[RMDB]
RNA sequence: GGGAACGACUCGAGUAGAGUCGAAAACUUCUCUCGUCUUCCUCGGUCAACCUCCUGAGUUCCUCUUCUUCCUCCUUGCUGAGGUUCUUGCCUCCCGCCGAUAGCUGCUUCUUCUUGUUCUUGAGGGCCUUCCUUCGUCGGUGAUCCUGCCUCUCCCCUAAGAGAGACAGUUCGCUGUCUCUCUUAGAAAAGAAACAACAACAACAAC
Reactivity to 2A3 in 0.01 (KOAc 150mM, MgCl2 10mM, bicine 150mM(pH8.5), 24C), signal-to-noise 1, nucleotides 027 to 156: c060u180u070c040u010c010u010c060g050u020c000u120u030c040c000u030c040g050g040u040c030a050a090c010c000u080c000c030u050g060a050g040u090u040c020c020u020c000u150u000c040u080u050c010c000u040c000c000u020u070g010c070u090g030a020g080g000u030u090c040u030u100g020c020c000u020c010c030c000g040c000c020g030a040u070a080g030c040u030g040c020u050u000c010u040u000c000u060u160g050u140u020c000u050u040g030a030g040g020g000c000c000u050u090c000c020u080u020c050g100u000c030g030g000u030g020a060u050c010c010u030g000c000c010u000c000u010c000c000c010
Reactivity to DMS in 0.01 (KOAc 150mM, MgCl2 10mM, bicine 150mM(pH8.5), 24C), signal-to-noise 2, nucleotides 027 to 156: c030u000u010c010u010c000u010c050g020u000c040u010u010c020c000u010c110g000g010u010c050a100a120c070c010u000c060c040u010g020a190g060u000u000c020c000u000c050u000u010c030u000u010c020c010u020c030c040u020u000g040c100u020g010a110g030g030u010u010c040u020u000g000c030c010u010c040c040c000g020c040c020g020a070u000a090g020c020u000g050c030u010u000c020u000u000c040u010u010g020u000u000c040u010u010g020a170g010g020g000c050c030u030u000c020c040u010u000c050g030u000c020g030g020u010g000a060u010c080c070u000g000c010c010u000c010u010c000c030c040